[RMDB]
RNA sequence: GGGAACGACUCGAGUAGAGUCGAAAAGAGCGAUUAGACAAAGGGGUAGAGCUACAUAUUAGAUAGCUGUAUAAUCGUUCAAGUUACAUCAAAACAUCUUCAAUAUUUAUUUCUUACUUUCCUUUCUGCCAGAGUACGGUAUUCGUACCGUACUCAAGACCAUGUAAGGCUUCGGCCUUACAUGGUCAAAAGAAACAACAACAACAAC
Reactivity to 2A3 in 0.01 (KOAc 150mM, MgCl2 10mM, bicine 150mM(pH8.5), 24C), signal-to-noise 2, nucleotides 027 to 156: g000a000g000c010g000a000u010u040a020g030a040c040a060a020a080g040g040g010g080u050a030g030a000g080c000u000a000c010a060u250a190u160u220a060g140a300u020a010g030c020u010g010u000a030u000a020a000u000c000g000u000u000c010a040a000g000u060u040a060c060a080u110c070a080a080a100a000c040a050u050c080u220u090c060a110a130u050a230u090u200u130a150u030u100u000c020u000u110a130c030u000u110u140c010c030u000u150u000c010u040g040c030c040a060g000a000g000u000a000c000g000g000u000a010u040u070c070g010u030a000c000c000g000u000a000c000u000c000a000a000
An RNA of 207 nucleotides, treated with 2A3 and read out base by base. Conditions: 150 mM KOAc, 10 mM MgCl2 and 150 mM bicine (pH 8.5), 24 C.